[RMDB]
RNA sequence: GGGAACGACUCGAGUAGAGUCGAAAAUAAUCAAACUCAUCCAUCAGUCUGCAACAUUAGUAGGUGCAAGGUGGAAGCUUUGUGCGCACAACAUGUUUGAUUGCAAAGAUUUUUAGUAGAAAUAAAAAUUCCAGCAUCAUUUCGAUGAUGCUGGAAUAAAAGAAACAACAACAACAAC
Reactivity to DMS in 0.01 (KOAc 150mM, MgCl2 10mM, bicine 150mM(pH8.5), 24C), signal-to-noise 1, nucleotides 027 to 126: u030a080a020u050c150a010a140a030c010u000c130a090u010c070c000a080u000c010a000g020u000c000u010g090c000a080a030c000a000u050u020a300g010u010a090g020g050u000g000c000a000a050g000g010u000g060g050a050a190g000c020u000u000u000g000u000g000c070g000c230a030c060a180a040c230a100u000g000u000u000u000g000a000u000u000g000c220a040a100a110g020a040u000u050u040u000u000a140g010u030a250g000a000a110a040u030a000a020a110a060
Reactivity to 2A3 in 0.01 (KOAc 150mM, MgCl2 10mM, bicine 150mM(pH8.5), 24C), signal-to-noise 2, nucleotides 027 to 126: u110a000a030u090c100a090a000a010c010u020c040a050u010c090c000a020u000c000a070g200u040c000u000g060c010a090a110c030a150u070u080a130g090u030a110g040g050u030g000c030a090a090g030g000u010g000g040a060a010g000c010u080u110u050g080u060g000c050g060c070a010c010a120a000c020a030u130g030u010u090u040g040a130u070u010g020c040a060a140a140g010a080u060u060u160u180u130a150g030u090a000g120a090a080a050u250a020a090a000a090